[RMDB]
RNA sequence: GGGAACGACUCGAGUAGAGUCGAAAAGAUAUGGAUACUGUAUACAGCUUGGAUUUACGCUCGGAAACGAGCGUUGUCAGCUGAUACUGGUAUCCUAAGUCAAAAUCAUCAACUUCGGUUGAUGAAACUAUACACCAUUGUUCGCAAUGGUGUAUAGAAAAGAAACAACAACAACAAC
Reactivity to DMS in 0.01 (KOAc 150mM, MgCl2 10mM, bicine 150mM(pH8.5), 24C), signal-to-noise 6, nucleotides 027 to 126: g010a040u010a300u010g000g000a010u000a000c000u000g020u000a010u000a160c010a010g010c010u000u010g030g030a030u000u010u000a010c000g020c000u000c000g000g000a110a110a190c010g000a010g020c010g020u010u000g000u000c000a020g010c000u000g000a060u000a010c010u000g030g000u000a000u000c000c000u000a030a110g010u010c070a100a090a150a170u000c000a000u000c010a000a010c000u000u010c230g030g010u000u000g000a000u000g000a030a080a160
Reactivity to 2A3 in 0.01 (KOAc 150mM, MgCl2 10mM, bicine 150mM(pH8.5), 24C), signal-to-noise 8, nucleotides 027 to 126: g040a030u080a020u180g000g000a000u000a010c010u030g020u010a020u050a230c000a000g040c020u180u300g220g010a080u300u300u230a000c000g000c000u000c010g020g020a060a130a080c010g000a000g000c010g000u000u010g000u000c010a000g000c010u010g000a000u000a010c030u030g030g010u000a000u000c000c000u000a150a010g050u010c040a000a020a040a300u040c000a000u010c000a000a020c020u060u120c300g170g000u000u000g000a000u000g000a010a000a000